[RMDB]
RNA sequence: GGGAACGACUCGAGUAGAGUCGAAAAGACGGCGUCCGUGUUUGUGUGGGUAGAGCGGGUGUGGAAGUUGUGAUUGCGCCUUUUGAUGGUUGCUUUUCCCACAUGAUGUACCGGUUCUACAACGAAGCUCUCCGGAGAAUUUCGAUUCUCCGGAGAGAAAAGAAACAACAACAACAAC
Reactivity to DMS in 0.01 (KOAc 150mM, MgCl2 10mM, bicine 150mM(pH8.5), 24C), signal-to-noise 1, nucleotides 027 to 126: g000a080c040g010g000c070g040u000c070c000g020u010g010u080u010u000g000u050g000u000g000g010g020u000a000g000a060g030c000g050g010g000u000g050u000g000g000a060a050g000u000u000g000u020g010a060u000u020g020c020g000c000c020u020u000u020u000g000a050u030g020g020u040u000g000c000u000u000u000u000c000c030c050a080c050a040u040g000a220u070g010u020a040c050c010g000g000u020u000c020u000a030c080a130a180c150g020a080a110g020
Reactivity to 2A3 in 0.01 (KOAc 150mM, MgCl2 10mM, bicine 150mM(pH8.5), 24C), signal-to-noise 3, nucleotides 027 to 126: g060a010c040g000g000c000g020u020c060c020g060u060g110u050u100u110g100u030g000u080g010g090g000u080a020g000a000g000c090g010g000g050u000g000u010g040g020a080a120g020u080u090g020u050g090a050u010u120g010c000g000c010c010u030u190u100u090g260a250u200g070g060u150u210g020c000u050u030u060u020c000c050c000a040c010a110u080g020a070u080g030u050a030c000c030g000g040u000u000c020u000a100c030a160a070c080g050a020a000g010
The record gives the reactivity of an RNA of 177 nucleotides to DMS and 2A3. The data come from the RNA Mapping Database (RMDB), library OK1LIB. 2A3 adducts were read by reverse transcription with SuperScript II with manganese. The reactions ran in a buffer of 150 mM KOAc, 10 mM MgCl2 and 150 mM bicine (pH 8.5), at 24 C. DMS (dimethyl sulfate) methylates the pairing face of unpaired adenines and cytosines.